[RMDB]
The data come from the RNA Mapping Database (RMDB), library RFM100. Chemical mapping of a 177-nucleotide RNA with 2A3. Values cover nucleotides 27 to 126. Reactivities are rounded to 0.1 and cut off at 0 and 3.

RNA sequence: GGGAACGACUCGAGUAGAGUCGAAAAGAAUCACUUUGCCUCUAAAGGCCAGAGAAAAAUCACAGCUUCCUUGUCGGAGGGGAAAAGGACAGGUGAUCUGGGGAAAACGCAGCUACACCUGGAGCAACGAUAGCCAGGACUUCGGUCCUGGCUAUCGAAAAGAAACAACAACAACAAC
Reactivity to 2A3 in 0.01 (KOAc 150mM, MgCl2 10mM, bicine 150mM(pH8.5), 24C), signal-to-noise 1, nucleotides 027 to 126: g120a020a000u020c000a010c080u050u010u040g100c020c000u160c010u060a210a270a120g000g030c020c000a000g130a000g030a000a000a140a140a000u140c010a000c000a070g040c100u010u000c010c040u030u070g030u000c000g000g090a000g040g000g030g020a000a000a000a010g000g000a080c000a000g000g000u000g060a120u000c000u000g000g050g100g000a120a020a000a000c260g140c020a000g000c040u160a070c000a000c000c000u000g010g000a070g030c000a070a150
The RNA was probed in 150 mM KOAc, 10 mM MgCl2 and 150 mM bicine (pH 8.5) at 24 C.